The record gives the reactivity of an RNA of 177 nucleotides to DMS.
[RMDB]
RNA sequence: GGGAACGACUCGAGUAGAGUCGAAAAGAUAUGGAUCGAACUGUGGACAUGAACGGGAUCGGAAACGAUCCCAGUUCAACAGCCACGUUCGAUCCUAAGUCAAACACGGGGCCUUCGGGCCCCGUGACUCUUAAAAGUGGUUCGCCACUUUUAAGAGAAAAGAAACAACAACAACAAC
Reactivity to DMS in 0.01 (KOAc 150mM, MgCl2 10mM, bicine 150mM(pH8.5), 24C), signal-to-noise 3, nucleotides 027 to 126: g000a020u000a280u000g000g000a010u010c000g000a000a020c000u030g060u010g000g000a220c190a210u000g010a010a010c000g000g000g010a000u010c000g010g000a050a050a100c000g020a010u000c000c000c010a010g030u000u000c000a040a050c270a170g000c010c000a000c000g000u010u000c010g010a010u000c000c010u010a000a070g000u010c000a170a170a290c010a010c000g000g000g000g040c000c000u000u010c240g030g020g030c020c000c000c000g010u000g000a020

Reactivities are given for positions 27 through 126. The RNA was probed in 150 mM KOAc, 10 mM MgCl2 and 150 mM bicine (pH 8.5) at 24 C. For DMS the reverse transcriptase was MarathonRT.